[RMDB]
RNA sequence: GGGAACGACUCGAGUAGAGUCGAAAAACAUAGGCCAUGCUUACGACCAUGGCCUAUGACGAAUCUCAAGCAAUCAAGCAUUCUACUUCUAUUGCAACACUGAGGAGCUUACGAGCUCCUCAGUGAAAAAAGAGAGUAAUGUUCGCAUUACUCUCAAGAUUAGAACUAACUUCGGUUAGUUCUAAUCAAAAGAAACAACAACAACAAC
Reactivity to DMS in 0.01 (KOAc 150mM, MgCl2 10mM, bicine 150mM(pH8.5), 24C), signal-to-noise 2, nucleotides 027 to 156: a110c010a050u010a030g030g020c050c010a020u000g000c090u000u000a190c200g000a180c300c010a040u000g010g010c000c000u000a000u000g030a150c090g010a080a100u000c030u010c030a170a070g030c040a050a080u000c130a090a120g020c060a090u000u010c080u010a030c050u010u000c100u000a070u000u000g000c030a120a190c000a030c010u000g000a030g010g000a040g040c000u000u000a120c220g040a020g020c000u000c020c000u000c000a000g000u000g020a000a030a030a060a120a110g000a020g020a010g000u000a010a010u010g010u000u000c300g000c000a030u000u000a000c010u010c000u000c000a010a030
Reactivity to 2A3 in 0.01 (KOAc 150mM, MgCl2 10mM, bicine 150mM(pH8.5), 24C), signal-to-noise 3, nucleotides 027 to 156: a000c000a010u010a000g000g010c000c000a000u010g010c060u300u270a110c120g080a100c080c000a000u000g000g030c000c000u000a000u000g000a000c010g070a080a070u020c010u010c060a060a010g000c000a020a020u040c030a080a000g040c020a200u120u060c040u070a090c030u060u060c040u090a060u030u010g030c040a090a030c000a030c010u000g000a000g000g000a000g000c000u100u070a090c260g030a000g010c010u000c000c000u000c000a000g000u010g000a000a000a010a000a000a000g000a010g000a000g000u000a000a000u010g030u030u060c120g010c060a000u000u000a000c000u010c010u000c000a000a000